Overview
The data come from the RNA Mapping Database (RMDB), library OK1LIB. An RNA of 177 nucleotides, treated with DMS and 2A3 and read out base by base. 2A3 adducts were read by reverse transcription with SuperScript II with manganese. The reactions ran in a buffer of 150 mM KOAc, 10 mM MgCl2 and 150 mM bicine (pH 8.5), at 24 C. Reactivities are given for positions 27 through 126. The 2A3 profile rests on 26,017 reads.

[RMDB]
RNA sequence: GGGAACGACUCGAGUAGAGUCGAAAAGCGAUCAAUAAUAAGUCGACGACUCGAAAGAGUCACAUGGAAACAUGCAUACUAAUGCGUCCAAUGUAGGUCGACGAUUAGGACGCAGAAGAUCGCGAAAACGCAUAGGUAUAUUCGUAUACCUAUGCGUAAAAGAAACAACAACAACAAC
Reactivity to DMS in 0.01 (KOAc 150mM, MgCl2 10mM, bicine 150mM(pH8.5), 24C), signal-to-noise 9, nucleotides 027 to 126: g000c000g010a010u000c030a180a110u040a100a060u010a110a160g000u000c010g010a100c000g010a010c000u000c000g010a170a130a170g000a020g010u000c000a090c010a020u000g000g000a140a100a150c020a020u000g000c180a030u000a070c100u010a080a090u000g010c010g000u000c010c010a090a060u030g010u010a050g010g000u010c030g010a020c020g010a060u020u010a120g010g000a020c010g010c010a080g010a130a080g000a010u000c060g000c020g000a050a060a090
Reactivity to 2A3 in 0.01 (KOAc 150mM, MgCl2 10mM, bicine 150mM(pH8.5), 24C), signal-to-noise 9, nucleotides 027 to 126: g030c000g010a010u040c060a060a030u150a240a030u140a170a030g010u010c000g000a010c000g000a000c000u000c000g030a070a040a040g000a000g000u010c000a000c000a010u040g010g020a050a040a020c010a020u060g020c010a040u080a150c020u080a090a070u060g000c000g000u000c000c000a020a030u120g030u090a080g030g070u050c040g020a030c010g000a000u010u020a020g000g000a000c000g000c000a000g010a030a010g000a000u030c030g000c010g020a060a050a010